[RMDB]
Annotation: An RNA of 207 nucleotides, treated with 2A3 and read out base by base.
RNA sequence: GGGAACGACUCGAGUAGAGUCGAAAAGGGAGGUUGGUGGUGGACGAGCCACUCGCCAACCGGGUCAGGUCCGGAAGGAAGCAGCCCUAACGAGCCAGGCACGGGUCGCCGUGCCAGCCUCCCACCUUUUAAAGAACAAAUGCUUCGGCAUUUGUUCGGGAAAGAGAAUCUUCGGAUUCUCUUUCCCAAAAGAAACAACAACAACAAC
Reactivity to 2A3 in 0.01 (KOAc 150mM, MgCl2 10mM, bicine 150mM(pH8.5), 24C), signal-to-noise 2, nucleotides 027 to 156: g000g000g000a010g030g010u000u010g020g030u100g040g020u050g020g040a030c020g000a010g020c000c010a070c020u020c010g000c020c050a090a090c140c090g000g000g000u090c020a000g010g000u000c010c020g040g160a070a070g030g010a020a000g000c000a000g010c000c000c000u000a040a010c020g000a000g060c120c210a130g020g000c070a040c080g070g050g060u000c010g010c030c010g000u090g010c010c000a010g000c000c000u000c020c010c000a040c000c010u030u100u000u160a140a170a030g000a010a000c010a000a010a000u000g000c000u050u050c300g100g000c000a000u000u000u000g000u000u010c010
Conditions: 150 mM KOAc, 10 mM MgCl2 and 150 mM bicine (pH 8.5), 24 C.